Chemical mapping of a 177-nucleotide RNA with 2A3 and DMS. DMS adducts were read by reverse transcription with MarathonRT.

RNA sequence: GGGAACGACUCGAGUAGAGUCGAAAAUACGCUGGUAGCAGCAAGUAGCAGCUCCAUCCGCAGAUGAGCGGAAUAUACAAAUGACAAUGGAUCUCGAUAGAGCUGCUACAAUCGAGACCAUUAGAGACAUCCCUCAGCUGUUCGCAGCUGAGGGAUGAAAAGAAACAACAACAACAAC
Reactivity to 2A3 in 0.01 (KOAc 150mM, MgCl2 10mM, bicine 150mM(pH8.5), 24C), signal-to-noise 2, nucleotides 027 to 126: u270a060c010g020c000u020g000g090u160a200g110c010a000g000c020a040a040g000u050a000g020c040a000g000c000u000c000c000a050u000c010c010g000c000a000g080a300u210g090a160g020c000g020g000a010a000u120a000u040a000c000a000a020a150u300g220a090c080a040a020u000g000g090a180u000c000u000c000g000a000u000a160g000a000g020c010u000g010c020u000a000c000a000a020u040c010g000a000g000a020c000c000a000u030u000a070g080a000g000a030
Reactivity to DMS in 0.01 (KOAc 150mM, MgCl2 10mM, bicine 150mM(pH8.5), 24C), signal-to-noise 1, nucleotides 027 to 126: u070a010c180g000c000u000g020g010u080a110g060c100a000g050c080a300a300g010u000a000g000c000a000g040c000u000c000c300a050u050c010c000g000c000a230g010a100u010g050a220g000c030g000g000a000a150u000a040u130a270c250a050a040a060u120g000a130c230a050a000u020g000g000a030u000c000u000c000g000a000u000a080g010a000g060c000u000g120c000u000a000c000a020a140u000c000g000a000g000a060c000c000a000u000u000a120g010a060g050a270
The data come from the RNA Mapping Database (RMDB), library OK1LIB. 2A3 adducts were read by reverse transcription with SuperScript II with manganese.